Conditions: 150 mM KOAc, 10 mM MgCl2 and 150 mM bicine (pH 8.5), 24 C. This 177-nucleotide RNA was probed chemically with DMS and 2A3. The DMS profile rests on 3,693 reads. 2A3 adducts were read by reverse transcription with SuperScript II with manganese. The data come from the RNA Mapping Database (RMDB), library OK2TRN. Values are in units of 0.01, from 0 to 300, in steps of 10.
RNA sequence: GGGAACGACUCGAGUAGAGUCGAAAACAAGUGCGGUCCAGCACUCGAGCAGGGGCAGCGACCUCGAAGGGGCGCACUGGCCCGCCCCGCCGGUUUCGGUGCCGGUCGCGGAGCCGGUGUCGGCGGCAUUGCAAAGCUUUUUCGAAAGCUUUGCAAUAAAAGAAACAACAACAACAAC
Reactivity to DMS in 0.01 (KOAc 150mM, MgCl2 10mM, bicine 150mM(pH8.5), 24C), signal-to-noise 3, nucleotides 027 to 126: c080a070a030g030u000g010c010g000g010u010c040c050a150g000c080a100c100u000c060g030a100g000c090a150g010g010g000g020c050a100g020c090g010a110c130c000u010c040g020a110a140g000g000g000g010c030g000c040a060c040u000g010g000c040c020c020g000c020c060c040c030g000c010c010g010g000u000u000u000c030g000g010u010g000c030c030g010g000u000c160g010c030g020g000a120g010c000c000g000g010u000g010u010c030g010g030c030g000g000c150
Reactivity to 2A3 in 0.01 (KOAc 150mM, MgCl2 10mM, bicine 150mM(pH8.5), 24C), signal-to-noise 2, nucleotides 027 to 126: c040a000a060g020u020g040c010g040g300u040c020c010a040g010c060a040c090u070c020g100a070g070c070a040g010g010g070g000c020a050g090c040g110a240c020c010u020c030g030a100a060g000g000g030g000c030g000c020a040c030u040g040g000c020c000c000g000c030c000c000c000g000c000c010g030g000u000u050u090c020g030g020u070g030c030c020g060g120u180c100g020c020g150g000a020g000c000c010g000g020u010g020u000c010g030g060c050g020g000c020